Structure probing data (2A3 and DMS) for a 177-nucleotide construct.

RNA sequence: GGGAACGACUCGAGUAGAGUCGAAAAUAAGUCAAUAGAGAGGGAUGAAGUGAACUUCCAUAGAUAUUUCAGGUGGAGGUGUGUCCAAAUGGAAUCAGCAUUCGCUGAUGAAUGUCCAACUGAGAGGAUUGGAGGUCAGGUUCGCCUGACCUCCAAUAAAAGAAACAACAACAACAAC
Reactivity to 2A3 in 0.01 (KOAc 150mM, MgCl2 10mM, bicine 150mM(pH8.5), 24C), signal-to-noise 1, nucleotides 027 to 126: u240a050a000g130u000c090a030a160u300a110g130a000g050a050g000g010g000a140u090g060a300a000g070u250g130a070a090c000u000u000c000c000a000u000a000g050a010u150a100u190u100u130c120a010g020g020u030g030g000a030g000g000u060g030u040g080u060c080c010a100a070a090u130g030g010a000a000u000c000a000g000c030a060u080u300c120g000c000u040g080a000u000g110a000a050u180g060u000c000c000a000a000c080u090g050a080g000a000g160g050
Reactivity to DMS in 0.01 (KOAc 150mM, MgCl2 10mM, bicine 150mM(pH8.5), 24C), signal-to-noise 1, nucleotides 027 to 126: u040a030a100g000u060c050a030a090u060a050g010a100g000a140g040g000g000a100u000g010a060a080g000u000g010a020a090c070u010u020c010c020a030u020a030g000a090u060a040u010u050u010c040a020g000g010u000g000g030a000g000g010u020g000u000g050u010c020c060a080a080a110u050g000g000a140a000u010c000a000g010c000a190u020u030c150g070c000u000g000a000u000g000a050a050u000g000u000c060c000a020a100c060u020g000a070g020a100g000g020
Background:
The reactions ran in a buffer of 150 mM KOAc, 10 mM MgCl2 and 150 mM bicine (pH 8.5), at 24 C. The data come from the RNA Mapping Database (RMDB), library OK1LIB.